[RMDB]
RNA sequence: GGGAACGACUCGAGUAGAGUCGAAAAGUAGCUUGACAUUGGGUCUUGGUACUACAUGUACAGGAUAGGUGGGAGGCUUUGAAACCAGGACGCCAGUUUUGGCGGAGCCAUCCUUGGGAUACCACCCGCCUCCAUCCCGGUUCGCCGGGAUGGAGGCAAAAGAAACAACAACAACAAC
Reactivity to 2A3 in 0.01 (KOAc 150mM, MgCl2 10mM, bicine 150mM(pH8.5), 24C), signal-to-noise 1, nucleotides 027 to 126: g040u020a010g040c000u110u140g050a000c000a280u110u300g250g000g000u000c020u010u040g150g000u080a000c000u040a040c050a150u240g060u050a060c000a120g030g050a050u070a060g000g020u110g010g010g000a000g000g000c000u060u080u210g060a230a120a040c100c000a000g020g000a050c000g000c050c000a020g010u110u090u130u240g000g000c000g000g000a000g000c070c000a110u040c020c000u030u060g000g000g000a000u020a000c000c000a020c000c000c000

Record summary: This 177-nucleotide RNA was probed chemically with 2A3. The RNA was probed in 150 mM KOAc, 10 mM MgCl2 and 150 mM bicine (pH 8.5) at 24 C.